An RNA of 177 nucleotides, treated with DMS and read out base by base. Reactivities are given for positions 27 through 126. The reactions ran in a buffer of 150 mM KOAc, 10 mM MgCl2 and 150 mM bicine (pH 8.5), at 24 C.

RNA sequence: GGGAACGACUCGAGUAGAGUCGAAAAGAUAUGGACUUACUUGAUCGGUGUCCCUGAGCAACAGCCAUGAUAUCGGAAACGAUAUAUGGACAUGCUCUGGGACACCGAUCAAGUAAGUCCUAAGUCAGUAUGCCCUUAGGUUCGCCUAAGGGCAUACAAAAGAAACAACAACAACAAC
Reactivity to DMS in 0.01 (KOAc 150mM, MgCl2 10mM, bicine 150mM(pH8.5), 24C), signal-to-noise 2, nucleotides 027 to 126: g030a050u000a300u000g010g000a000c010u010u000a000c000u000u010g010a000u000c000g030g010u000g000u010c000c000c010u000g020a020g000c020a020a110c300a190g020c000c000a000u000g020a010u000a000u000c000g010g000a110a140a300c000g000a020u000a010u000a030u010g000g000a020c100a180u000g000c010u010c010u000g000g010g040a020c000a000c010c000g000a000u000c020a020a000g000u000a000a000g000u010c000c000u000a000a090g000u030c070a170